[RMDB]
RNA sequence: GGGAACGACUCGAGUAGAGUCGAAAAAGCAGGUGUCAAUUCACAUUAAGGCCAUCGCAGGACCAUGCCACAAGCUCGGCCACCGAUGUGACACCUGGAGUGUGGAGUGGUGGAGCGAAGUGACCAAUAAUAGUGCGAUCUUCGGAUCGCACUAUUAAAAAGAAACAACAACAACAAC
Reactivity to DMS in 0.01 (KOAc 150mM, MgCl2 10mM, bicine 150mM(pH8.5), 24C), signal-to-noise 2, nucleotides 027 to 126: a060g000c030a060g020g010u020g020u000c040a090a100u000u000c180a140c090a070u000u000a100a140g010g000c080c000a070u020c120g010c030a090g000g020a080c060c050a080u000g000c040c020a050c060a120a150g020c040u000c050g000g000c000c000a040c100c120g000a050u000g000u000g000a020c020a030c010c020u000g000g030a070g010u010g010u000g030g000a080g020u000g000g050u000g000g010a040g010c080g020a050a140g020u000g000a090c060c090a050a160
Reactivity to 2A3 in 0.01 (KOAc 150mM, MgCl2 10mM, bicine 150mM(pH8.5), 24C), signal-to-noise 1, nucleotides 027 to 126: a000g070c000a000g000g030u030g050u050c020a060a160u230u040c110a060c020a030u080u090a040a140g010g000c010c000a040u080c100g040c050a030g000g020a050c040c030a020u100g000c000c000a070c030a060a000g000c010u030c030g060g020c030c000a030c000c050g040a040u020g050u150g130a000c010a000c000c000u010g000g000a020g030u100g070u050g000g120a160g000u000g060g000u000g060g090a020g030c020g020a040a010g030u000g060a030c060c000a080a040

Background:
Structure probing data (DMS and 2A3) for a 177-nucleotide construct. For 2A3, 993 sequencing reads were counted. Values cover nucleotides 27 to 126. DMS adducts were read by reverse transcription with MarathonRT.